[RMDB]
RNA sequence: GGGAACGACUCGAGUAGAGUCGAAAAUUUUUAAUCUCUCCUAACUGCUCACUUCUUUACAUUCUUAAAUAUUUGCUUUGUGCUCUUUGACUUUUUUUUCCAUUAUGCUCUUUGAGCUUAUGGUGAAAUGAUGUAGUUAAGACUGAUUGCUUAAUGAAUUACGUACUAGCUUCGGCUAGUACGUAAUAAAAGAAACAACAACAACAAC
Reactivity to 2A3 in 0.01 (KOAc 150mM, MgCl2 10mM, bicine 150mM(pH8.5), 24C), signal-to-noise 3, nucleotides 027 to 156: u050u060u000u030u080a070a100u040c020u010c010u000c020c000u010a030a040c030u090g010c010u020c030a040c010u100u020c020u080u220u140a080c040a080u060u060c020u130u180a140a200a140u140a210u110u060u060g000c030u060u040u060g070u080g030c030u000c030u060u070u080g030a020c050u070u050u050u000u010u010u070u060c030c010a030u130u120a040u160g000c000u000c010u050u130u300g000a000g000c000u020u000a010u000g030g020u040g010a010a030a000u100g050a060u130g040u090a050g030u020u020a030a020g020a050c020u030g060a080u090u140g030c000u070u080a070a030u200g100a020
Chemical mapping of a 207-nucleotide RNA with 2A3. Conditions: 150 mM KOAc, 10 mM MgCl2 and 150 mM bicine (pH 8.5), 24 C.